[RMDB]
RNA sequence: GGGAACGACUCGAGUAGAGUCGAAAAACUUUAGCCAGCAGGCCUUGCAGCUGCCUCUGGUGGGGGUGGCGAGGAGGAUGAGAGCCUUGUGGCAGUCCUGCAAAAAUGCCUUGGGAGGAUGGGAUCCGAAUUAGCCGCAAUUCGUUGCGGCUAAUUCAAAAGAAACAACAACAACAAC
Reactivity to DMS in 0.01 (KOAc 150mM, MgCl2 10mM, bicine 150mM(pH8.5), 24C), signal-to-noise 2, nucleotides 027 to 126: a100c100u020u010u030a300g010c000c020a060g010c210a070g020g000c000c000u000u020g020c160a110g010c130u000g000c020c000u020c060u010g030g000u010g000g000g000g000g010u000g000g030c060g000a100g010g010a090g000g000a080u000g000a120g050a150g000c010c000u070u050g020u030g000g000c030a230g000u000c030c090u000g020c030a000a170a090a080a050u000g000c100c030u010u030g000g000g010a160g000g000a030u020g000g000g000a120u050c110c100
Reactivity to 2A3 in 0.01 (KOAc 150mM, MgCl2 10mM, bicine 150mM(pH8.5), 24C), signal-to-noise 2, nucleotides 027 to 126: a000c010u040u030u250a000g040c120c000a020g040c100a000g120g000c060c000u000u090g040c030a010g010c050u090g030c000c000u090c040u080g070g000u180g010g000g000g010g000u180g000g000c070g000a130g060g060a010g040g020a070u180g060a090g070a020g060c040c010u130u140g080u260g150g000c000a000g000u100c000c050u070g070c050a000a000a030a120a120u090g050c080c070u080u080g050g000g000a140g010g030a060u070g000g000g020a020u070c090c070